[RMDB]
RNA sequence: GGGAACGACUCGAGUAGAGUCGAAAAGAGGCGGUAACCCUUCUGAGCUGAGAACGAAGGCAAGGGGGAGGAAGGCUGACGCCUUGUUAGCGGGGUGUUAAGCACUAGAGUGUGGCACUGUGCCUCAAAAUGUCAGCUAUGGUUCCGUAGGGUGUGAUGAGUGCUUUACCCGGUGCUCAUCUUCUACCCAGCCCACCUACCCUUGUGACAUGGGCCGCGCUCCCCCCGGCGCGGUCUAUGUCAAUUGUAUAUCACUCCUGAGCUAAAGAUAGCAGUUCGCUGCUAUCAAAAGAAACAACAACAACAAC
Reactivity to DMS in 0.01 (KOAc 150mM, MgCl2 10mM, bicine 150mM(pH8.5), 24C), signal-to-noise 5, nucleotides 027 to 266: g020a090g000g010c050g020g000u010a050a060c060c010c090u000u010c090u000g010a120g020c050u000g000a050g010a110a150c180g010a110a080g010g010c030a040a070g020g020g000g000g010a100g010g010a130a070g000g000c010u000g000a030c030g010c060c040u000u000g010u010u010a120g010c040g010g000g000g010u000g000u000u000a080a120g020c020a050c030u010a120g010a110g020u000g010u000g010g010c050a040c060u000g010u010g010c010c050u000c040a050a030a070a160u010g010u000c020a020g000c010u000a090u010g010g010u000u010c060c060g010u000a100g010g010g020u000g010u000g000a010u010g010a010g010u000g000c000u010u000u030a150c220c170c120g010g010u000g000c000u000c000a000u000c020u000u010c060u020a030c010c000c010a200g010c050c010c030a130c060c060u000a090c080c020c020u000u000g010u000g000a010c000a000u000g000g010g000c000c000g010c000g000c000u000c050c020c000c000c020c010g000g000c010g010c010g010g000u000c010u000a000u000g000u000c000a010a030u010u000g010u000a090u010a170u010c060a080c070u000c030c100u010g000a100g000c050u010a070a130a180
Reactivity to 2A3 in 0.01 (KOAc 150mM, MgCl2 10mM, bicine 150mM(pH8.5), 24C), signal-to-noise 5, nucleotides 027 to 266: g070a030g010g040c040g020g050u140a090a100c000c020c030u080u060c100u120g060a040g020c030u050g020a010g030a110a060c120g030a110a020g030g010c020a010a060g020g000g010g010g030a080g020g020a070a040g060g000c000u010g010a010c010g040c010c000u030u040g090u050u070a070g050c060g030g030g000g010u010g010u060u110a100a020g020c020a020c060u090a060g030a110g210u110g010u120g050g020c050a030c070u120g070u060g300c010c010u050c010a040a040a000a050u160g020u020c010a010g000c020u050a070u190g040g010u070u050c060c040g040u120a130g010g000g000u040g000u020g020a010u000g000a000g000u020g010c030u080u050u160a130c050c040c050g000g010u000g000c010u000c000a010u000c010u060u010c010u030a020c010c000c000a000g010c010c010c010a060c000c010u080a080c020c000c010u040u080g080u040g050a000c010a000u000g000g000g000c000c010g000c010g000c020u090c020c000c000c010c010c020g000g010c000g000c010g000g000u000c010u000a000u000g000u000c000a000a000u010u000g000u020a130u030a020u200c040a030c070u070c030c050u080g100a040g060c070u150a050a050a120
Background: An RNA of 307 nucleotides, treated with DMS and 2A3 and read out base by base. The 2A3 profile rests on 6,972 reads. For DMS the reverse transcriptase was MarathonRT. For 2A3 the reverse transcriptase was SuperScript II with manganese. For DMS, 17,328 sequencing reads were counted.